Description:
Chemical mapping of a 177-nucleotide RNA with DMS and 2A3. Reactivities are given for positions 27 through 126. High DMS reactivity at an A or C suggests that its Watson-Crick edge is free. The RNA was probed in 150 mM KOAc, 10 mM MgCl2 and 150 mM bicine (pH 8.5) at 24 C.

[RMDB]
RNA sequence: GGGAACGACUCGAGUAGAGUCGAAAAUAGUACAUAUCGCCAUGGUCAUCUAGGUGCAGUACGUCUAGGCACUAGCAUGGAUCGAUCCUCGUACGUACAGAGUACUGCAUCAUGGAUCGAUCUGAUCCAAAGGGGUAAGUUUCGACUUACCCCUUUGAAAAGAAACAACAACAACAAC
Reactivity to DMS in 0.01 (KOAc 150mM, MgCl2 10mM, bicine 150mM(pH8.5), 24C), signal-to-noise 9, nucleotides 027 to 126: u010a080g010u000a070c090a080u010a070u000c070g010c050c040a090u000g010g010u000c040a060u000c040u000a070g020g020u000g010c010a040g010u000a030c050g010u000c060u000a100g010g020c080a050c050u000a110g020c170a090u010g010g000a050u010c100g010a060u000c010c010u000c200g010u000a030c140g000u010a070c090a120g010a170g010u000a010c010u000g010c020a030u000c050a070u000g000g000a010u000c060g010a020u000c010u000g010a070u000c100
Reactivity to 2A3 in 0.01 (KOAc 150mM, MgCl2 10mM, bicine 150mM(pH8.5), 24C), signal-to-noise 3, nucleotides 027 to 126: u070a000g060u040a020c050a060u170a050u100c060g000c050c030a080u060g030g000u050c030a030u000c030u020a040g060g010u010g030c010a010g050u030a010c050g070u010c040u060a100g110g030c040a030c080u020a030g020c040a070u140g020g000a010u040c080g040a050u000c000c010u030c080g020u040a060c060g000u010a010c040a060g150a020g050u010a010c010u020g000c000a020u050c010a040u100g000g000a000u000c020g010a000u010c020u030g010a040u050c050